[RMDB]
RNA sequence: GGGAACGACUCGAGUAGAGUCGAAAAUGUAUCUGGUGCUAUUGCCGGGGUUUCUGAAAUCCUUGUUAUGUACCCAUUGGAUGUGGUUAAAACAAGACAGCAAUUGGCCACUACAAAUGAUUACAACGCAUGCGUCACGAUUCGUCGUGACGCAUGCAAAAGAAACAACAACAACAAC
Reactivity to 2A3 in 0.01 (KOAc 150mM, MgCl2 10mM, bicine 150mM(pH8.5), 24C), signal-to-noise 1, nucleotides 027 to 126: u060g070u000a010u000c090u010g000g000u070g060c130u000a020u180u050g000c010c020g000g020g000g030u000u090u000c170u130g080a120a020a030u150c060c000u000u000g000u010u030a050u300g040u060a060c000c000c030a130u110u000g050g000a170u180g080u080g010g000u050u090a000a000a000a000c000a020a000g090a060c000a180g080c030a000a000u080u020g000g080c010c000a000c000u010a000c010a000a030a010u170g000a060u190u190a010c090a090a000c000
This 177-nucleotide RNA was probed chemically with 2A3. The RNA was probed in 150 mM KOAc, 10 mM MgCl2 and 150 mM bicine (pH 8.5) at 24 C. It was measured as part of the RMDB library OK1LIB. The 2A3 profile rests on 402 reads.